[RMDB]
RNA sequence: GGGAACGACUCGAGUAGAGUCGAAAACAGAAUGUGGUUGAUGGAGACACUGAGAUGGAAAAUCAGAGAGAACAAGUAGUGUGGUAUAGAUUAUUUCUCAUGUUCCCUCCAGUUCUUGUACCAAACUCAGCUUAUAUAUCUUUCUUGGAACCCUACAUGAGUGAUAUUUAUUCGUAAAUAUCACUCAAAAAGAAACAACAACAACAAC
Reactivity to DMS in 0.01 (KOAc 150mM, MgCl2 10mM, bicine 150mM(pH8.5), 24C), signal-to-noise 4, nucleotides 027 to 156: c060a120g010a080a120u010g020u000g010g010u000u000g010a120u000g010g000a140g010a100c070a090c040u020g040a070g030a280u000g010g020a090a070a060a120u000c070a070g010a120g010a080g010a050a070c060a050a080g010u000a060g020u020g020u000g020g010u010a080u000a070g010a100u010u000a100u010u010u000c010u000c020a070u000g020u000u000c000c010c010u000c030c020a110g010u000u000c020u000u010g010u010a060c040c020a060a040a050c020u000c040a090g010c030u010u000a080u000a070u000a090u000c040u000u000u010c000u000u000g010g010a090a090c010c010c010u000a080c110a160
Reactivity to 2A3 in 0.01 (KOAc 150mM, MgCl2 10mM, bicine 150mM(pH8.5), 24C), signal-to-noise 5, nucleotides 027 to 156: c040a010g090a070a050u140g010u050g020g020u050u040g020a040u060g030g020a030g020a010c030a010c050u030g000a030g010a120u070g040g040a030a050a010a070u100c070a020g050a000g010a000g010a110a010c050a130a030g060u090a050g030u080g020u040g050g070u080a050u070a100g040a020u050u070a030u100u200u010c040u020c030a060u060g020u040u020c000c000c020u000c010c000a000g000u050u020c020u060u080g020u040a070c010c000a050a020a070c060u040c030a020g010c000u150u030a030u020a010u010a050u220c010u020u100u000c010u020u060g080g010a090a080c010c040c010u140a050c040a090
Overview: Source: RMDB library OK3TST, as collected in RNAgym. Structure probing data (DMS and 2A3) for a 207-nucleotide construct. The reactions ran in a buffer of 150 mM KOAc, 10 mM MgCl2 and 150 mM bicine (pH 8.5), at 24 C. For DMS the reverse transcriptase was MarathonRT. For 2A3, 3,830 sequencing reads were counted.